[RMDB]
RNA sequence: GGGAACGACUCGAGUAGAGUCGAAAAACGAUGCUUCGGCAUCGUAAAAAUCCUAAGUCGAAUGAGGGCAGAGCUAGGAGUGUGUCGGAAACGACACCUCCUUGGACCUCUGCCUACCCACCAUUCGAUAUGGAAAAAAAGGCUAUUCGUAGCCUAACAGUUAAAGAUUCUUCGGAAUCUUUAACUGAAAAGAAACAACAACAACAAC
Reactivity to DMS in 0.01 (KOAc 150mM, MgCl2 10mM, bicine 150mM(pH8.5), 24C), signal-to-noise 3, nucleotides 027 to 156: a030c000g000a000u000g010c000u010u020c300g030g000c000a020u000c000g000u000a010a020a120a100a090u000c000c000u000a060a280g010u000c000g010a010a020u010g010a220g000g020g010c010a000g000a030g030c070u000a020g020g020a040g030u020g060u020g020u010c000g020g000a170a120a190c000g020a010c010a000c000c000u000c000c000u000u020g030g000a110c250c000u020c010u000g020c020c000u000a000c020c000c040a300c020c000a030u000u000c000g010a020u000a280u000g000g000a000a000a040a090a090a150a110g000g010c020u010a070u010u000c090g050u010a040g010c000c000u000a020a110
Reactivity to 2A3 in 0.01 (KOAc 150mM, MgCl2 10mM, bicine 150mM(pH8.5), 24C), signal-to-noise 4, nucleotides 027 to 156: a000c000g000a000u010g000c000u070u080c160g140g000c010a000u000c000g000u000a000a000a010a030a000u050c010c000u050a110a020g020u000c000g000a000a000u000g010a030g000g010g000c010a000g000a010g020c010u010a000g000g010a020g020u300g000u000g000u030c000g020g050a100a080a070c010g000a000c000a000c000c000u010c010c030u010u010g000g030a000c000c000u000c000u000g000c010c000u000a000c000c000c010a040c000c000a000u000u000c000g000a000u020a060u100g020g050a050a080a020a010a030a060a050g000g000c000u030a030u090u140c220g110u050a010g000c000c000u010a060a030
This 207-nucleotide RNA was probed chemically with DMS and 2A3. For 2A3 the reverse transcriptase was SuperScript II with manganese. The 2A3 profile rests on 5,975 reads.